The record gives the reactivity of an RNA of 177 nucleotides to 2A3 and DMS. Values cover nucleotides 27 to 126. The reactions ran in a buffer of 150 mM KOAc, 10 mM MgCl2 and 150 mM bicine (pH 8.5), at 24 C. It was measured as part of the RMDB library OK2TRN. The 2A3 profile rests on 1,958 reads.
RNA sequence: GGGAACGACUCGAGUAGAGUCGAAAACUGACCGUAUGUCAGAGCGUGUAUCAUAUCUAUACCAACCAUAUAACCCUUCAAUCUUACGUUUAGUUAAACAAGUUAUUGAAGCGUCACAUAAAGAAGGGAAGAUACUCCAGUUCGCUGGAGUAUCUUCAAAAGAAACAACAACAACAAC
Reactivity to 2A3 in 0.01 (KOAc 150mM, MgCl2 10mM, bicine 150mM(pH8.5), 24C), signal-to-noise 3, nucleotides 027 to 126: c010u000g010a040c010c070g270u240a090u260g030u050c000a020g010a030g060c080g030u130g030u030a030u090c050a040u060a030u090c040u050a070u030a070c050c040a090a020c030c040a070u140a020u040a210a060c010c000c000u000u010c010a020a040u040c020u010u050a020c020g020u040u040u070a220g110u090u230a040a050a020c050a130a050g090u140u080a100u040u050g030a010a000g010c010g030u000c010a040c000a050u180a060a120a010g090a030a040g070g050
Reactivity to DMS in 0.01 (KOAc 150mM, MgCl2 10mM, bicine 150mM(pH8.5), 24C), signal-to-noise 3, nucleotides 027 to 126: c010u000g000a070c030c300g020u010a070u000g000u000c040a030g020a180g000c080g000u000g030u000a090u000c040a070u000a050u000c070u000a060u000a170c030c030a070a090c130c050a130u000a060u010a120a130c060c030c000u000u000c010a010a040u000c050u010u020a060c180g010u010u020u000a130g010u000u010a100a020a040c040a060a060g010u010u010a030u000u010g010a010a020g010c180g000u000c090a040c150a060u000a030a080a150g010a070a120g000g000